[RMDB]
RNA sequence: GGGAACGACUCGAGUAGAGUCGAAAAUUGUGGUCAAGACCUUGGCGUAGUAUCCAAGGUUGACAAGGUUCCUAUUGACUUAACAAUGAUUGAGUUUAUGUUAUGGUGUAAGGAUGGACAGGGGAAAAACACAAUGUGCAUUCGUGCACAUUGUGUUAAAAGAAACAACAACAACAAC
Reactivity to 2A3 in 0.01 (KOAc 150mM, MgCl2 10mM, bicine 150mM(pH8.5), 24C), signal-to-noise 2, nucleotides 027 to 126: u030u040g070u080g080g050u030c020a110a030g080a040c000c000u000u010g000g000c080g130u170a070g010u010a140u040c000c000a000a000g000g000u000u000g000a000c000a010a010g110g030u020u000c000c000u000a050u010u150g020a000c000u030u060a070a020c080a070a290u190g060a270u020u090g000a070g140u090u040u040a130u120g080u050u130a080u230g080g000u020g010u080a100a060g050g010a030u050g010g000a030c040a050g000g000g000g070a040a000a000
Reactivity to DMS in 0.01 (KOAc 150mM, MgCl2 10mM, bicine 150mM(pH8.5), 24C), signal-to-noise 3, nucleotides 027 to 126: u000u010g030u000g010g000u010c020a080a120g000a070c010c000u010u000g010g000c240g030u020a160g000u020a130u000c000c000a020a010g010g000u010u000g010a050c100a080a100g000g020u000u000c010c010u000a130u010u000g000a050c020u010u000a040a030c030a050a070u010g000a130u000u000g020a110g010u000u000u010a040u020g010u000u010a050u000g000g010u000g000u010a060a060g010g000a040u000g010g010a050c100a070g000g000g020g000a050a050a040

An RNA of 177 nucleotides, treated with 2A3 and DMS and read out base by base. For DMS the reverse transcriptase was MarathonRT. For 2A3, 1,379 sequencing reads were counted. The reactions ran in a buffer of 150 mM KOAc, 10 mM MgCl2 and 150 mM bicine (pH 8.5), at 24 C.